[RMDB]
RNA sequence: GGGAACGACUCGAGUAGAGUCGAAAAAUGUAUGUAUGUAUGUAUGUGUGCAUGUGCAUGUGCAUGUAUGCAUAUUGCAUGUAUAUAUUAUGCAUACAAAACCUCCCGACCGUUCGCGGUCGGGAGGCACACAUACAACGUUCGCGUUGUAUGUGUGAAAAGAAACAACAACAACAAC
Reactivity to 2A3 in 0.01 (KOAc 150mM, MgCl2 10mM, bicine 150mM(pH8.5), 24C), signal-to-noise 4, nucleotides 027 to 126: a000u070g000u020a000u010g000u010a000u010g090u020a000u030g020u000a000u010g040u010g010u010g020c020a000u010g010u010g010c020a020u030g050u110g110c100a060u300g050u150a010u010g000c000a000u010a030u010u050g000c000a000u010g010u000a010u000a000u000a000u060u040a000u020g000c010a000u000a000c000a010a100a020a030c000c000u000c010c000c000g010a000c010c010g020u070u100c240g010c020g110g000u000c000g000g000g000a000g000g000
Reactivity to DMS in 0.01 (KOAc 150mM, MgCl2 10mM, bicine 150mM(pH8.5), 24C), signal-to-noise 3, nucleotides 027 to 126: a120u000g000u000a000u000g000u000a000u000g000u000a000u010g020u000a000u000g020u000g000u000g000c050a020u000g010u000g000c020a010u000g020u010g020c300a100u010g020u000a000u000g000c000a010u000a010u020u000g010c000a000u000g000u000a010u000a000u000a010u000u000a020u000g000c000a010u000a010c010a030a050a100a210c000c000u000c000c000c000g010a010c000c000g020u000u010c200g030c010g010g010u000c000g000g000g010a000g000g000

An RNA of 177 nucleotides, treated with 2A3 and DMS and read out base by base. The RNA was probed in 150 mM KOAc, 10 mM MgCl2 and 150 mM bicine (pH 8.5) at 24 C. The data come from the RNA Mapping Database (RMDB), library RFMREP.